[RMDB]
RNA sequence: GGGAACGACUCGAGUAGAGUCGAAAAGCCAUGUGACUUUUGUCGCAUGGCGACGACGGAGUUUUCUCCGUCGGAUAUCCGCCAUCCGCUAGCCCGGGAUGGCCUAUCUGCCGAACAUGCUUUUUAGCUUGUGAGGUAGUUAGUGCUUGGGGCGUCAAGUGAUGGCGAUAUUCGUAUCGCCAUCACUAAAAGAAACAACAACAACAAC
Reactivity to 2A3 in 0.01 (KOAc 150mM, MgCl2 10mM, bicine 150mM(pH8.5), 24C), signal-to-noise 1, nucleotides 027 to 156: g010c010c000a010u000g010u000g000a010c040u200u190u280u300g010u010c010g000c000a000u000g000g030c000g000a000c000g010a000c000g020g000a020g010u000u070u300u180c000u010c000c000g000u000c010g000g000a030u030a070u010c010c010g020c020c000a000u000c000c000g010c100u010a000g020c010c020c020g040g000g000a000u000g000g000c000c000u000a000u000c000u010g000c010c000g000a050a010c000a020u050g010c040u100u060u130u080u300a000g010c000u010u020g000u020g020a020g000g070u000a000g000u010u010a000g000u000g030c050u110u190g020g000g000g000c020g040u080c100a050

Source information
Conditions: 150 mM KOAc, 10 mM MgCl2 and 150 mM bicine (pH 8.5), 24 C. Chemical mapping of a 207-nucleotide RNA with 2A3. For 2A3 the reverse transcriptase was SuperScript II with manganese. It was measured as part of the RMDB library OK3TST.